The record gives the reactivity of an RNA of 207 nucleotides to DMS and 2A3. The reactions ran in a buffer of 150 mM KOAc, 10 mM MgCl2 and 150 mM bicine (pH 8.5), at 24 C. Source: RMDB library M2RFPK, as collected in RNAgym. For 2A3, 6,721 sequencing reads were counted.

RNA sequence: GGGAACGACUCGAGUAGAGUCGAAAAUGACGUUAAACUGCUGAAUCAUACAUACUGACACCGGUUGCUCAACAGGCUGUGUGGGACAAUAGAAUAACAAGGCUGUCAAUUUGAGCUUGACGGCUGCAAAACCUGCAGUACUUCGGUACUGCAGGAAGAGUCAAAUUAUGUUCGCAUAAUUUGACUCAAAAGAAACAACAACAACAAC
Reactivity to DMS in 0.01 (KOAc 150mM, MgCl2 10mM, bicine 150mM(pH8.5), 24C), signal-to-noise 2, nucleotides 027 to 156: u000g010a100c070g000u010u010a070a050a190c040u000g030c060u000g000a130a160u000c010a080u000a060c030a070u000a100c030u010g010a080c040a120c040c050g010g040u000u000g000c040u000c050a070a050c030a070g030g000c000u000g010u000g000u000g040g000g040a260c040a040a090u010a090g010a130a100u000a080a060c000a100a210g000g010c010u020g010u000c010a000a060u000u010u010g000a140g030c300u010u000g000a030c040g010g040c010u000g000c080a040a050a080a130c000c000u000g010c000a040g010u000a000c000u000u010c300g020g020u000a010c000u000g000c010a000g010g000a000a010
Reactivity to 2A3 in 0.01 (KOAc 150mM, MgCl2 10mM, bicine 150mM(pH8.5), 24C), signal-to-noise 6, nucleotides 027 to 156: u100g050a020c060g010u060u080a060a060a050c030u070g010c030u040g080a050a050u080c020a010u050a130c010a030u120a060c030u070g070a030c020a030c070c030g070g000u050u090g010c020u020c060a030a080c010a060g050g000c030u010g020u010g000u030g060g040g010a000c020a020a070u060a100g100a070a060u100a090a030c060a110a020g040g000c010u000g000u000c000a000a000u060u040u170g040a030g030c000u000u000g010a000c000g020g000c000u020g000c020a020a070a040a080c000c000u000g000c000a000g000u000a000c010u020u030c040g050g000u000a000c000u000g000c000a000g010g010a000a010